Conditions: 150 mM KOAc, 10 mM MgCl2 and 150 mM bicine (pH 8.5), 24 C. The record gives the reactivity of an RNA of 177 nucleotides to DMS and 2A3. For 2A3, 1,912 sequencing reads were counted. Reactivities are given for positions 27 through 126.
[RMDB]
RNA sequence: GGGAACGACUCGAGUAGAGUCGAAAAUGUUGCGAGCGGUGGACGCAGCCUUGGAGACUCGCUGGCAUCGGCCAGAGGAGUGGCAGGCCAUAAUGCGCAACGGCAUGACCGCGGAUCUGUCGUGGAACCUUGUCCAGUGUUUCGACACUGGACAAGGAAAAGAAACAACAACAACAAC
Reactivity to DMS in 0.01 (KOAc 150mM, MgCl2 10mM, bicine 150mM(pH8.5), 24C), signal-to-noise 2, nucleotides 027 to 126: u030g000u010u000g010c000g010a100g010c030g020g040u000g000g010a120c030g010c080a160g010c020c080u000u010g020g060a250g040a100c010u000c010g040c010u000g000g020c030a220u020c300g020g000c000c000a020g000a050g010g000a030g050u010g040g020c020a150g000g000c010c040a120u000a050a110u010g000c040g020c000a070a040c050g010g040c110a050u010g000a070c050c000g030c100g000g020a120u050c130u030g010u000c020g010u000g000g010a140a190
Reactivity to 2A3 in 0.01 (KOAc 150mM, MgCl2 10mM, bicine 150mM(pH8.5), 24C), signal-to-noise 2, nucleotides 027 to 126: u110g000u000u010g000c050g000a010g000c050g000g050u120g070g060a030c030g000c100a030g000c010c010u070u140g100g050a030g050a070c030u000c010g000c010u010g000g000c010a150u260c230g290g000c000c000a010g010a050g060g040a010g030u060g000g110c020a000g020g000c000c010a080u130a120a070u180g050c010g000c050a000a010c020g000g000c040a040u090g010a130c020c010g000c060g040g000a090u050c030u090g110u070c020g000u010g020g030a080a070